[RMDB]
An RNA of 207 nucleotides, treated with DMS and 2A3 and read out base by base. For 2A3 the reverse transcriptase was SuperScript II with manganese. The RNA was probed in 150 mM KOAc, 10 mM MgCl2 and 150 mM bicine (pH 8.5) at 24 C. Reactivities are given for positions 27 through 156. For DMS, 3,514 sequencing reads were counted.
RNA sequence: GGGAACGACUCGAGUAGAGUCGAAAACGUACACAGAGGACCCGCCGGGAGACUGAGCCGACGCGGUCCCGCAGGGGAUAACCGAAUCGUCGUCCCAAUCCGCUUGCGCUGCCUGUUGAACUCGGCUCGAUACGGUGCUCAUACUGACCUACAGGUAUCUUCAAGCAAAAUUCGUUUUGCUUGAAGAAAAAGAAACAACAACAACAAC
Reactivity to DMS in 0.01 (KOAc 150mM, MgCl2 10mM, bicine 150mM(pH8.5), 24C), signal-to-noise 2, nucleotides 027 to 156: c040g040u000a030c060a230c050a110g030a090g040g000a070c020c040c030g040c030c000g080g020g010a120g030a100c030u000g020a130g040c030c000g000a000c030g010c040g060g000u000c010c020c020g010c070a070g030g050g000g030a060u000a050a100c030c000g000a070a100u010c060g010u010c020g010u010c000c020c020a100a140u010c030c030g000c020u010u010g020c050g040c030u000g000c010c020u020g040u000u020g010a050a060c050u010c050g040g000c010u000c020g000a160u000a060c030g010g010u010g000c020u020c010a100u010a080c050u010g000a190c030c010u010a100c030a040g000g010u000a100
Reactivity to 2A3 in 0.01 (KOAc 150mM, MgCl2 10mM, bicine 150mM(pH8.5), 24C), signal-to-noise 4, nucleotides 027 to 156: c020g020u090a040c080a010c020a040g110a110g060g020a030c000c030c030g000c030c030g040g050g000a180g030a090c090u120g030a040g060c000c000g010a010c040g050c060g010g000u020c010c000c000g020c030a030g040g020g020g020a040u070a130a070c040c070g030a090a080u160c080g040u010c010g010u010c030c010c000a010a050u040c030c020g130c170u040u050g020c040g010c020u040g040c000c000u080g020u130u070g070a070a030c010u010c050g010g000c020u020c020g010a030u040a120c040g020g020u070g050c010u030c020a070u090a140c040u090g080a110c040c010u100a070c040a090g000g050u070a050